[RMDB]
RNA sequence: GGGAACGACUCGAGUAGAGUCGAAAAAGGUGUGGAGCGACCUUAAACAGUUCUGGUGGUGCUCUGAAUGGAGUGCUCUACUGAGAUUCUAAAAUAGAAGGUAAGCUAUUAUCUCUUACAACAGGGCGAAGCACUCGGGGGUUCGCCCCCGAGUGAAGUAUUAUUUCUCCUUCGGGAGAAAUAAUACAAAAGAAACAACAACAACAAC
Reactivity to 2A3 in 0.01 (KOAc 150mM, MgCl2 10mM, bicine 150mM(pH8.5), 24C), signal-to-noise 2, nucleotides 027 to 156: a000g020g010u000g030u080g020g010a000g000c000g030a030c010c000u080u130a130a030a010c020a040g000u040u050c000u010g050g030u040g040g030u050g000c000u010c010u040g080a060a050u180g020g000a010g020u070g000c020u020c040u070a040c030u030g050a030g010a160u120u060c060u160a050a040a090a120u100a080g040a100a010g020g010u010a050a000g000c030u010a040u090u010a080u140c060u010c020u050u120a070c020a100a010c030a060g000g030g000c040g040a080a020g060c000a000c010u010c000g000g010g010g000g000u010u040c100g040c000c000c030c000c000g000a000g000u000g000a000a000